[RMDB]
RNA sequence: GGGAACGACUCGAGUAGAGUCGAAAAAAACGGGCUCCUACAUCGUCCAAAAGGGAGACCGCAUCGCUCAAGGCAUCAUCGCUCCAGUAGAGCGUGCGGAGUUUACCGUAGUUGGUGAGCUUAGCGAAACGAAACGCGGAGCAGGCGGAUUCGGACACGAACAGUUGAUUUUCGAAUCAACUGUUCGAAAAGAAACAACAACAACAAC
Reactivity to 2A3 in 0.01 (KOAc 150mM, MgCl2 10mM, bicine 150mM(pH8.5), 24C), signal-to-noise 2, nucleotides 027 to 156: a010a000a020c050g000g010g000c030u030c000c020u070a100c030a170u070c080g080u020c060c060a040a120a000a000g060g000g000a050g000a010c020c000g000c010a090u160c090g000c010u020c030a120a000g070g010c000a090u050c000a020u050c130g020c040u080c030c010a120g090u200a030g050a000g020c010g000u020g010c000g050g000a030g040u080u060u050a050c000c000g000u010a030g020u020u090g010g010u040g060a050g040c010u040u090a020g010c010g040a090a120a070c010g000a120a000a000c020g000c030g030g000a040g010c030a020g040g050c020g010g020a020u060u070c040g030g000a020c050a010
Reactivity to DMS in 0.01 (KOAc 150mM, MgCl2 10mM, bicine 150mM(pH8.5), 24C), signal-to-noise 1, nucleotides 027 to 156: a060a020a040c000g000g000g020c000u010c000c000u030a090c110a110u000c020g020u030c090c070a110a070a140a240g020g000g040a020g030a030c000c000g020c060a110u060c140g070c040u000c000a070a060g010g000c030a090u000c010a130u000c050g040c010u010c000c020a130g030u000a090g000a140g050c010g050u000g030c010g010g010a150g080u000u020u000a040c050c020g060u010a170g030u000u000g030g000u000g000a080g000c000u000u000a090g080c050g010a110a130a110c080g000a100a050a060c020g060c130g000g010a030g050c050a060g020g000c080g020g020a250u000u000c020g000g000a070c150a250